[RMDB]
RNA sequence: GGGAACGACUCGAGUAGAGUCGAAAAGAUAUGGAGAUCCACAUGGUGCCAGCGUGGGAUCGGAAACGAUCUACACGCGGUAAUUCCAUAUGGAUCUCCUAAGUCAAAAUCGUGGUUCGCCACGAAACAGUAAAGAGAACUUCGGUUCUCUUUACUGAAAAGAAACAACAACAACAAC
Reactivity to DMS in 0.01 (KOAc 150mM, MgCl2 10mM, bicine 150mM(pH8.5), 24C), signal-to-noise 6, nucleotides 027 to 126: g010a040u000a300u010g000g000a020g010a010u010c000c000a020c040a010u000g000g010u000g000c010c010a130g070c000g030u000g000g000g000a010u000c000g000g000a110a080a250c010g010a010u000c000u010a120c000a000c010g030c000g010g000u010a030a190u020u000c010c000a000u000a080u010g000g010a000u000c000u000c000c000u000a010a060g010u010c030a100a090a130a140u000c010g050u000g000g010u000u020c300g000c010c010a010c010g020a030a070a210
Reactivity to 2A3 in 0.01 (KOAc 150mM, MgCl2 10mM, bicine 150mM(pH8.5), 24C), signal-to-noise 5, nucleotides 027 to 126: g010a020u080a020u150g010g000a000g000a010u010c000c000a000c010a030u010g010g020u060g030c130c220a200g000c130g000u010g000g010g000a000u010c020g000g000a060a100a020c010g000a000u020c000u250a300c080a000c000g010c010g000g010u010a010a050u220u060c010c000a010u010a020u010g000g000a000u010c000u000c000c000u000a010a000g000u010c000a000a010a040a300u050c010g000u010g030g030u080u080c300g010c080c000a000c010g000a050a010a010
Record summary
An RNA of 177 nucleotides, treated with DMS and 2A3 and read out base by base. For 2A3 the reverse transcriptase was SuperScript II with manganese. DMS adducts were read by reverse transcription with MarathonRT.